[RMDB]
RNA sequence: GGGAACGACUCGAGUAGAGUCGAAAACGUACGUGGAGACACGUACGACGAGACUUCGGUCUCGAAUCGCGCGAACUGGUGCCGCGCGCGCGCGAGGCGUCGGUGGUCGGCGAGCCCACGGACGCAAAAACUCGCGCGUAAAUAAAUAGCAAUAGUACCAUACGUCCGUAUUCGUACGGACGUAUGGAAAAGAAACAACAACAACAAC
Reactivity to 2A3 in 0.01 (KOAc 150mM, MgCl2 10mM, bicine 150mM(pH8.5), 24C), signal-to-noise 2, nucleotides 027 to 156: c010g000u000a000c000g000u000g030g000a030g000a030c010a000c010g000u000a000c020g000a050c010g000a000g000a000c020u060u120c300g080g010u020c000u000c010g030a070a080u100c020g000c000g000c000g000a090a070c050u040g040g000u010g000c000c020g010c000g000c000g000c010g000c000g000c000g050a000g000g010c000g000u000c070g130g010u000g010g000u040c020g030g200c170g000a050g000c000c000c000a000c030g060g000a010c020g000c000a070a120a030a080a110c000u000c000g000c000g000c000g000u010a000a000a000u300a000a000a000u010a000g000c000a020a000u010a050g010u000a050
About this RNA
This 207-nucleotide RNA was probed chemically with 2A3. 2A3 is a SHAPE reagent: it acylates the 2'-hydroxyl of flexible nucleotides of all four kinds. Source: RMDB library OK3TST, as collected in RNAgym. The RNA was probed in 150 mM KOAc, 10 mM MgCl2 and 150 mM bicine (pH 8.5) at 24 C.